Background
An RNA of 177 nucleotides, treated with DMS and 2A3 and read out base by base. For 2A3, 14,016 sequencing reads were counted. 2A3 adducts were read by reverse transcription with SuperScript II with manganese.
RNA sequence: GGGAACGACUCGAGUAGAGUCGAAAAGAUAUGGAGCGAAUAUCCGAGCGAAGAACUAUACAGAAACUGUAUCGGAAACGAUACGAUAGUACGGUAUAGGGAGCUCGGUAAGUUCGCUCCUAAGUCACACACUAUACAGGUUCGCCUGUAUAGUGUGAAAAGAAACAACAACAACAAC
Reactivity to DMS in 0.01 (KOAc 150mM, MgCl2 10mM, bicine 150mM(pH8.5), 24C), signal-to-noise 5, nucleotides 027 to 126: g010a060u000a280u010g010g000a030g030c010g020a020a030u000a300u020c000c000g000a020g020c000g000a110a170g000a110a210c000u000a000u000a000c000a060g000a300a080a070c050u020g000u000a000u010c000g000g000a090a040a150c010g010a020u000a000c000g000a040u010a080g000u010a070c140g000g020u000a000u000a010g010g010g010a050g030c010u000c000g010g000u000a020a090g000u000u000c000g000c000u000c000c000u000a000a050g000u000c040a300
Reactivity to 2A3 in 0.01 (KOAc 150mM, MgCl2 10mM, bicine 150mM(pH8.5), 24C), signal-to-noise 4, nucleotides 027 to 126: g020a000u050a030u160g000g000a000g020c010g000a010a000u050a070u080c000c000g000a010g010c010g290a300a020g010a060a020c000u000a000u000a010c010a030g080a190a080a010c030u050g000u010a010u000c010g030g000a050a050a020c010g000a000u000a010c010g030a040u110a080g060u090a020c040g040g000u000a010u000a000g010g000g000a000g000c000u000c020g000g000u010a020a020g010u010u000c010g000c010u000c000c000u000a000a000g010u000c010a010
Description: Values cover nucleotides 27 to 126.